[RMDB]
RNA sequence: GGGAACGACUCGAGUAGAGUCGAAAAAAAGGCUAGCCUCAUGCUGGUUGUGCUAACUUGGCUCCCUACAGGCAGGGAGUACUGAAGGGCAAGAGGCUAUGUACUGCCAGCUAGAUUCGGGGUCAAGCCUAGCACCCGAGUUCGCUCGGGUGCUAGGAAAAGAAACAACAACAACAAC
Reactivity to DMS in 0.01 (KOAc 150mM, MgCl2 10mM, bicine 150mM(pH8.5), 24C), signal-to-noise 1, nucleotides 027 to 126: a050a070a010g010g000c020u000a200g040c000c000u000c050a210u000g000c000u000g030g030u000u000g040u000g030c080u030a080a080c010u000u010g020g030c170u010c000c000c000u000a100c060a110g000g000c070a200g020g010g020a070g010u000a010c010u010g000a170a020g000g020g010c220a080a070g000a120g000g000c040u000a020u000g010u000a000c020u000g000c010c000a070g000c010u000a180g000a090u040u000c110g000g000g030g000u000c040a070a070g000
Source: RMDB library OK2TRN, as collected in RNAgym. This 177-nucleotide RNA was probed chemically with DMS. DMS adducts were read by reverse transcription with MarathonRT. The reactions ran in a buffer of 150 mM KOAc, 10 mM MgCl2 and 150 mM bicine (pH 8.5), at 24 C.